[RMDB]
RNA sequence: GGGAACGACUCGAGUAGAGUCGAAAAUCUGGACCGUUCGCGGUCCAGAAACUACCGAGUAUGCGACUCGGUAUAUAAACGCAACCCUUGGAAACAAGGGAACACUCUGCUGCUUCGGCAGCAGAAAUACGUGUUCAGUAUUCGUACUGAACACGUAAAAAGAAACAACAACAACAAC
Reactivity to DMS in 0.01 (KOAc 150mM, MgCl2 10mM, bicine 150mM(pH8.5), 24C), signal-to-noise 2, nucleotides 027 to 126: u000c000u000g000g000a020c000c000g050u000u020c190g040c000g040g000u000c000c000a000g000a010a120a150c080u000a230c010c010g020a010g000u010a130u000g010c080g000a190c000u000c010g010g020u010a020u010a040u000a020a020a050c050g000c040a060a300c010c000c000u000u000g000g000a180a130a180c000a000a020g000g000g000a050a010c200a100c100u000c000u000g010c000u000g000c020u000u010c210g030g000c010a020g010c000a000g000a010a080a060
Reactivity to 2A3 in 0.01 (KOAc 150mM, MgCl2 10mM, bicine 150mM(pH8.5), 24C), signal-to-noise 1, nucleotides 027 to 126: u010c010u000g000g000a000c000c000g030u050u080c280g010c000g070g010u000c000c000a000g010a010a000a000c010u020a050c000c030g010a000g020u060a080u190g080c040g130a090c030u010c000g000g000u000a010u000a000u000a020a020a010c020g010c020a070a170c000c000c000u000u010g020g000a070a060a030c000a010a000g000g000g000a000a010c020a020c000u030c000u000g010c020u000g010c010u030u040c170g120g000c000a010g000c000a000g020a000a010a010